[RMDB]
RNA sequence: GGGAACGACUCGAGUAGAGUCGAAAAUGUCUUAGUGUGCAGUGAAAACAGGAGAGCAGCCUCUAAUAAUCUAUGGAUUUAAUGACUGCAACUUUGAAGAGUGUUAAGCUAAAGUGAAGUUCAGAAUGGCUUGUUAACUGGGUUUAUUAGCUGUUGAGUAGCCUAUUUACUUCGGUAAAUAGGCUACAAAAGAAACAACAACAACAAC
Reactivity to DMS in 0.01 (KOAc 150mM, MgCl2 10mM, bicine 150mM(pH8.5), 24C), signal-to-noise 1, nucleotides 027 to 156: u000g000u000c040u000u000a070g020u010g020u000g030c010a050g010u020g040a110a090a110a110c110a130g000g000a120g010a290g030c020a030g020c020c000u000c070u020a040a130u010a050a060u000c030u020a130u020g040g040a090u000u000u000a070a140u000g000a050c040u020g030c000a070a070c050u000u020u000g020a090a080g000a080g000u000g040u000u000a060a120g010c020u010a020a070a070g000u000g020a070a050g010u000u000c090a050g000a070a120u000g010g010c050u000u000g010u000u000a030a120c020u020g000g000g030u000u010u000a060u030u000a080g030c010u010g010u000u000g000a150
Reactivity to 2A3 in 0.01 (KOAc 150mM, MgCl2 10mM, bicine 150mM(pH8.5), 24C), signal-to-noise 2, nucleotides 027 to 156: u090g030u020c030u050u070a070g030u030g050u030g080c030a030g010u010g100a020a000a040a100c040a030g000g040a080g000a010g010c000a010g020c020c020u030c030u040a130a130u050a040a030u110c060u100a150u250g130g010a020u030u140u080a070a060u140g020a020c000u000g000c040a040a060c010u040u030u110g060a050a020g030a020g050u050g030u040u090a040a020g010c030u030a040a040a020g050u100g050a100a000g020u030u060c000a020g040a100a130u030g020g020c030u030u060g040u040u070a020a020c030u050g040g000g000u040u080u030a050u060u140a050g010c010u000g020u090u100g030a040
Structure probing data (DMS and 2A3) for a 207-nucleotide construct. Conditions: 150 mM KOAc, 10 mM MgCl2 and 150 mM bicine (pH 8.5), 24 C. The DMS profile rests on 2,541 reads. Source: RMDB library OK3TST, as collected in RNAgym.